[RMDB]
RNA sequence: GGGAACGACUCGAGUAGAGUCGAAAAUGAAACUCUAAAACAUACCAAUUUCCUCAGACAUGAGGAUCACCCAUGUCCGUCUAAGUUAGGAGAGGUGAAGAAUACGACCACCUAGAGAUAAAAAAAACUAUACCUUUUAGUUCGCUAAAAGGUAUAGAAAAGAAACAACAACAACAAC
Reactivity to 2A3 in 0.01 (KOAc 150mM, MgCl2 10mM, bicine 150mM(pH8.5), 24C), signal-to-noise 2, nucleotides 027 to 126: u090g000a050a060a040c020u000c030u110a080a080a020a040c020a020u120a050c000c040a050a030u060u000u000c010c000u020c020a030g000a120c040a070u070g010a100g000g040a050u110c070a150c010c000c000a020u050g010u000c000c010g030u050c070u140a070a040g080u040u100a070g030g050a070g000a070g050g000u020g010a090a070g040a110a020u180a130c050g050a020c020c000a000c010c000u030a020g010a000g040a060u300a050a050a060a050a020a000a000a000
Reactivity to DMS in 0.01 (KOAc 150mM, MgCl2 10mM, bicine 150mM(pH8.5), 24C), signal-to-noise 2, nucleotides 027 to 126: u020g010a150a110a070c030u000c020u010a040a110a160a110c030a040u020a050c070c020a050a060u000u000u000c010c000u000c010a030g010a060c150a070u000g000a070g000g000a100u010c250a100c030c000c000a030u010g000u000c000c030g020u000c060u000a040a050g010u000u000a110g010g000a080g000a060g010g000u000g000a070a040g010a080a070u010a030c050g000a060c080c000a060c030c000u000a020g000a080g010a070u020a000a010a010a090a030a010a070a170

Background:
Structure probing data (2A3 and DMS) for a 177-nucleotide construct. The RNA was probed in 150 mM KOAc, 10 mM MgCl2 and 150 mM bicine (pH 8.5) at 24 C. Values cover nucleotides 27 to 126. 2A3 adducts were read by reverse transcription with SuperScript II with manganese.